[RMDB]
RNA sequence: GGGAACGACUCGAGUAGAGUCGAAAAAAUUUGCUUUCCUGAGGUAAAAGGAGGAAAACUGCUAUCGUAUCCUACAUUGCCAUCACUAAAGAAUGGAAUGUUUUCUAUGAGUGGUCCAAGAUCCAGACUUCUCAGGUAGGUUCGCCUACCUGAGAAGAAAAGAAACAACAACAACAAC
Reactivity to DMS in 0.01 (KOAc 150mM, MgCl2 10mM, bicine 150mM(pH8.5), 24C), signal-to-noise 1, nucleotides 027 to 126: a080a110u030u000u000g000c060u000u000u000c000c000u000g000a080g010g000u010a110a010a070a050g010g020a070g000g010a060a080a100a080c050u000g000c060u010a090u000c100g080u010a130u010c040c000u000a030c050a050u000u020g030c010c000a030u000c020a210c120u040a090a140a080g000a130a060u010g000g020a030a010u010g000u000u000u010u000c010u020a030u000g000a010g000u000g000g000u000c050c080a090a140g010a120u030c010c030a100g020a290